[RMDB]
RNA sequence: GGGAACGACUCGAGUAGAGUCGAAAAGCCUUGACCUUGCCGACGACUUCCACGCUGCUCUCGGCCAGGGGAAGGGUCAGGCCGCUGCCCACGCACUGGGUCACGCCGGUCACGUCGCGCAGCACCAGCGUCCUACGAGCUUCGGCUCGUAGGACGCAAAAGAAACAACAACAACAAC
Reactivity to 2A3 in 0.01 (KOAc 150mM, MgCl2 10mM, bicine 150mM(pH8.5), 24C), signal-to-noise 1, nucleotides 027 to 126: g060c010c000u020u020g080a020c000c010u000u030g000c000c000g010a030c060g000a000c030u130u050c040c060a070c220g200c110u100g020c020u070c030u080c040g000g020c020c000a020g000g000g020g000a000a050g000g000g050u000c040a070g080g100c000c000g000c060u050g010c000c030c000a000c000g050c000a090c040u030g000g040g000u050c000a000c070g050c080c070g020g000u030c000a040c160g110u040c010g000c000g030c020a010g020c060a010c040c000a000